[RMDB]
RNA sequence: GGGAACGACUCGAGUAGAGUCGAAAAGGGGUCGACUUGAGAUCCGGGAGGACAUGCUCUACUGAAGCCUCCACGGUAGAGCAACAGCCUCCUCGGAUCAAUGAUGGUCGACGGAGGCACCCAAAGUACCUUCAUGAGUUCGCUCAUGAAGGUACAAGUUAUCCGGACGAUUCGUCGUCCGGAUAACAAAAGAAACAACAACAACAAC
Reactivity to 2A3 in 0.01 (KOAc 150mM, MgCl2 10mM, bicine 150mM(pH8.5), 24C), signal-to-noise 1, nucleotides 027 to 156: g050g010g060g030u010c000g000a000c000u000u010g020a000g000a020u000c020c030g000g000g000a010g010g020a050c040a250u230g000c000u000c010u000a010c000u030g110a190a060g000c000c000u020c000c010a000c010g000g000u000a000g000a010g020c040a070a030c080a040g020c000c000u020c000c000u050c160g000g010a000u040c000a070a030u020g000a000u020g010g000u020c000g000a010c010g010g000a000g000g020c000a030c000c030c000a050a060a000g000u000a000c000c000u000u000c010a000u000g010a010g020u050u190c210g170c120u020c000a000u010g020a000a000g020g010u000a000c010a020a000